Structure probing data (2A3 and DMS) for a 177-nucleotide construct.
The 2A3 profile rests on 1,902 reads.
DMS adducts were read by reverse transcription with MarathonRT.
Values cover nucleotides 27 to 126.
RNA sequence: GGGAACGACUCGAGUAGAGUCGAAAAUUGACAGCCCUGGAGACUGAAAUCCUCUAUUUAUCCACAGGACAGGUACAGCACAGGCAGCGACAGUGCGAGCUUUCCCCACACCACCCCGUCCAUGUGCUGCUGACCAAUAGUUCGCUAUUGGUCAGCAAAAAGAAACAACAACAACAAC
Reactivity to 2A3 in 0.01 (KOAc 150mM, MgCl2 10mM, bicine 150mM(pH8.5), 24C), signal-to-noise 3, nucleotides 027 to 126: u050u060g070a010c020a000g050c010c000c000u020g030g010a030g020a050c020u050g030a060a040a040u050c040c020u020c020u030a060u070u090u060a150u080c040c040a030c000a070g000g080a010c010a050g070g000u120a050c050a030g040c040a000c010a040g050g040c040a040g000c020g040a020c020a020g030u030g050c000g020a010g020c000u030u060u040c000c000c000c000a020c000a000c000c020a030c030c020c000c000g000u000c030c020a050u090g010u070g030c030
Reactivity to DMS in 0.01 (KOAc 150mM, MgCl2 10mM, bicine 150mM(pH8.5), 24C), signal-to-noise 2, nucleotides 027 to 126: u020u010g020a140c080a180g000c040c000c000u000g000g000a040g000a190c090u060g010a020a040a100u010c030c060u000c080u000a060u020u000u000a080u010c080c050a090c210a040g030g010a040c100a010g000g000u000a120c150a100g000c040a040c050a070g000g000c060a050g000c080g000a100c120a070g000u010g020c060g000a070g030c120u000u000u000c010c000c000c030a100c070a070c090c030a100c020c000c020c080g060u000c010c000a030u020g000u000g030c080